[RMDB]
The record gives the reactivity of an RNA of 177 nucleotides to DMS. The DMS profile rests on 5,155 reads. Source: RMDB library TTRDEL, as collected in RNAgym. The reactions ran in a buffer of 150 mM KOAc, 10 mM MgCl2 and 150 mM bicine (pH 8.5), at 24 C. Reactivities are rounded to 0.1 and cut off at 0 and 3.
RNA sequence: GGGAACGACUCGAGUAGAGUCGAAAAGAUAUGGAAAUACCGGGCUCGUAGUUUCGUUGAAAUCGGAAACGAUGGAGAAAUCACGAGCCUGGUAUUUCCUAAGUCAAAAGCGAGGUUCGCCUCGCAACGUAUUGACUAACUUCGGUUAGUCAAUACGAAAAGAAACAACAACAACAAC
Reactivity to DMS in 0.01 (KOAc 150mM, MgCl2 10mM, bicine 150mM(pH8.5), 24C), signal-to-noise 4, nucleotides 027 to 126: g010a030u000a300u000g010g000a030a010a020u000a010c000c000g010g010g000c000u000c000g020u000a030g010u000u000u000c000g020u000u020g000a080a130a030u000c000g000g000a140a100a150c010g010a020u000g010g000a090g010a010a020a010u000c050a000c000g000a010g020c000c000u010g000g000u000a000u000u000u000c010c000u000a010a060g010u000c030a090a070a090a120g000c000g000a020g020g020u010u020c230g020c000c000u000c000g020c000a020a040